[RMDB]
RNA sequence: GGGAACGACUCGAGUAGAGUCGAAAAGAAGUUGGUGUCUUCGUGACAGCUUCCUACAAGGCACUGCUGCAGCGCAACCUUCGCCCAACGGAAAGGAGCAGCGGUGGUCAGAGCGCGCAGCCCUCCAGAUACGACUAAAUUUCGAUUUAGUCGUAUCAAAAGAAACAACAACAACAAC
Reactivity to 2A3 in 0.01 (KOAc 150mM, MgCl2 10mM, bicine 150mM(pH8.5), 24C), signal-to-noise 9, nucleotides 027 to 126: g110a050a010g040u120u140g060g090u040g020u010c030u060u090c150g070u080g040a030c030a050g020c030u040u020c000c000u050a080c040a100a080g070g000c010a010c040u020g000c000u010g000c020a150g020c030g000c050a040a050c000c000u040u060c050g030c010c020c010a070a070c090g060g080a140a090a100g060g020a080g020c050a010g000c010g020g000u040g000g020u050c060a050g030a020g150c030g000c000g000c010a010g010c020c000c000u030c020c000a010
Reactivity to DMS in 0.01 (KOAc 150mM, MgCl2 10mM, bicine 150mM(pH8.5), 24C), signal-to-noise 7, nucleotides 027 to 126: g000a060a120g010u000u010g020g010u010g000u000c020u000u010c150g010u040g010a080c090a070g010c070u010u010c010c020u020a080c150a090a060g010g000c040a030c010u010g010c000u000g020c010a120g040c080g010c090a140a070c030c000u000u010c110g020c000c050c050a130a180c170g010g010a080a080a080g000g010a140g000c120a120g000c000g000g010u000g000g010u000c070a100g000a110g010c020g000c030g010c040a120g000c020c010c030u000c020c060a140